Chemical mapping of a 177-nucleotide RNA with DMS and 2A3. It was measured as part of the RMDB library TTRDEL. Reactivities are rounded to 0.1 and cut off at 0 and 3.

RNA sequence: GGGAACGACUCGAGUAGAGUCGAAAAGAUAUGGAGAGAGCUUGGACCAAAGGUCUCGGAAACGAGACUUUGCUAGCUCCUCCUAAGUCAAAACAAUGCCUAUGCCGUUCGCGGCAUAGGCAUUGAACUUUGUAUUUGUGUUCGCACAAAUACAAAGAAAAGAAACAACAACAACAAC
Reactivity to DMS in 0.01 (KOAc 150mM, MgCl2 10mM, bicine 150mM(pH8.5), 24C), signal-to-noise 3, nucleotides 027 to 126: g000a060u000a300u000g000g000a040g000a140g000a010g020c000u010u010g040g010a170c300c090a010a020a010g010g010u000c000u000c000g000g010a060a070a130c000g000a010g000a050c000u010u000u000g000c020u010a030g000c000u000c000c000u000c000c000u000a010a090g000u000c030a080a060a090a230c010a020a010u000g010c000c000u000a010u000g010c000c010g010u010u010c250g000c040g000g030c000a010u000a010g000g000c010a000u000u000g000a040a170
Reactivity to 2A3 in 0.01 (KOAc 150mM, MgCl2 10mM, bicine 150mM(pH8.5), 24C), signal-to-noise 1, nucleotides 027 to 126: g020a010u080a070u110g000g000a040g010a010g010a000g040c030u220u210g110g080a280c100c060a080a020a050g180g070u030c000u000c000g000g000a050a070a010c000g010a000g010a010c000u000u010u000g020c000u010a000g000c010u000c000c020u000c010c010u010a110a000g050u000c000a000a000a000a220c000a020a020u000g010c020c000u010a000u010g000c030c040g080u120u130c300g020c000g140g010c020a010u000a000g030g010c000a000u000u000g000a010a010